Structure probing data (2A3 and DMS) for a 207-nucleotide construct. It was measured as part of the RMDB library M2RFPK. For 2A3 the reverse transcriptase was SuperScript II with manganese.

RNA sequence: GGGAACGACUCGAGUAGAGUCGAAAAGCUUAAUAACCUGCGCUGAGCCCUUCUCCCCCAGCUUGCCUGUGUCCUAUGGAAUUGGAAGGUCAUCCUUCACAGGAUCGUGUGGAAGUCCUGCUCGGGGUCCAAACAUGGUAAUUCGUUACCAUGUUAAGGACUGUAAGAUAUUCGUAUCUUACAGUCCAAAAGAAACAACAACAACAAC
Reactivity to 2A3 in 0.01 (KOAc 150mM, MgCl2 10mM, bicine 150mM(pH8.5), 24C), signal-to-noise 4, nucleotides 027 to 156: g010c000u080u090a110a010u070a150a160c020c050u070g020c050g000c090u070g050a070g000c030c020c000u100u060c120u060c000c040c000c000c010a010g010c010u040u050g020c000c000u050g000u020g020u070c000c010u050a060u050g020g040a070a070u090u050g010g020a030a030g040g030u110c030a100u160c010c000u050u020c030a050c000a070g030g010a030u050c040g030u060g010u030g070g020a030a020g030u020c000c000u020g010c000u000c040g010g000g000g020u030c020c010a040a030a010c000a000u000g010g000u010a030a030u030u020c010g000u000u000a000c000c000a000u000g000u010u030a020a000
Reactivity to DMS in 0.01 (KOAc 150mM, MgCl2 10mM, bicine 150mM(pH8.5), 24C), signal-to-noise 3, nucleotides 027 to 156: g010c030u000u000a070a120u010a100a090c020c010u000g020c060g000c060u010g000a090g000c020c010c040u000u000c050u000c010c010c010c010c020a100g030c030u020u000g020c010c020u000g020u000g010u000c010c020u000a100u000g000g020a050a150u010u020g010g000a060a090g020g010u000c090a140u000c030c010u000u000c040a070c010a040g000g020a040u000c050g020u000g030u000g020g020a080a090g010u010c030c020u010g030c040u000c070g010g010g040g040u000c030c050a100a040a020c000a010u000g010g010u000a010a060u000u010c290g010u010u000a000c010c000a020u000g010u000u010a070a150